[RMDB]
RNA sequence: GGGAACGACUCGAGUAGAGUCGAAAAGUAGUGCUCGAGAGGGAGGCUGUCUCGCAGAGCUUUUAGAUCUUCUGAUCUUUCCCUCCUCCAUAUGGCUUAUGCGUCAAGCGAUAGACGCAUAAUUAAAAGUGUAUUAAAUGUUCGCAUUUAAUACACUAAAAGAAACAACAACAACAAC
Reactivity to 2A3 in 0.01 (KOAc 150mM, MgCl2 10mM, bicine 150mM(pH8.5), 24C), signal-to-noise 6, nucleotides 027 to 126: g020u070a000g110u030g120c050u050c100g050a040g020a030g040g140g020a020g090g040c070u080g120u110c010u000c010g000c050a010g030a030g090c000u000u020u010u010a000g000a000u020c010u290u080c140u300g010a010u010c000u010u010u010c010c000c010u000c000c010u000c000c010a100u100a140u200g140g000c020u030u000a000u010g000c000g000u000c030a060a080g100c060g200a140u080a170g000a010c010g000c000a000u000a000a010u030u110a020a100a020
Reactivity to DMS in 0.01 (KOAc 150mM, MgCl2 10mM, bicine 150mM(pH8.5), 24C), signal-to-noise 7, nucleotides 027 to 126: g010u000a080g020u000g010c040u000c040g000a040g000a210g000g010g010a060g010g010c090u010g000u000c020u000c040g020c120a080g000a230g000c020u000u000u000u000a020g000a010u000c000u010u010c290u010g010a020u000c000u000u000u000c000c000c000u000c020c010u000c010c020a130u010a100u010g010g010c240u000u000a000u000g000c000g000u000c000a070a130g020c230g010a110u000a060g010a010c010g000c000a000u000a000a020u010u010a040a090a070
About this RNA
The record gives the reactivity of an RNA of 177 nucleotides to 2A3 and DMS. Conditions: 150 mM KOAc, 10 mM MgCl2 and 150 mM bicine (pH 8.5), 24 C. For DMS the reverse transcriptase was MarathonRT. It was measured as part of the RMDB library M2PK90. 2A3 adducts were read by reverse transcription with SuperScript II with manganese.